RNA sequence: GGGAACGACUCGAGUAGAGUCGAAAAGAAACUUUGGCGAUCACUGCCUCUCUGGGCCUGUGUCUUAGGCUCUGCAAGAUCAACCGAGCAAAGCACACGGCCUGCAGAGAGGCAGCGCUCUGCCCAAUCUGACAUAGCCCUUCGGGGCUAUGUCAGAAAAAGAAACAACAACAACAAC
Reactivity to 2A3 in 0.01 (KOAc 150mM, MgCl2 10mM, bicine 150mM(pH8.5), 24C), signal-to-noise 1, nucleotides 027 to 126: g040a010a030a020c030u000u040u070g000g000c000g000a000u050c080a040c100u000g000c030c000u000c000u050c000u030g000g000g000c000c050u010g000u000g050u050c000u040u030a140g080g010c000u050c000u000g090c070a140a050g040a290u200c080a100a130c040c050g010a000g010c000a000a030a000g000c000a000c000a010c150g000g000c000c000u010g040c000a000g010a000g000a010g000g000c000a000g000c000g000c000u030c000u010g040c030c000c000a000a040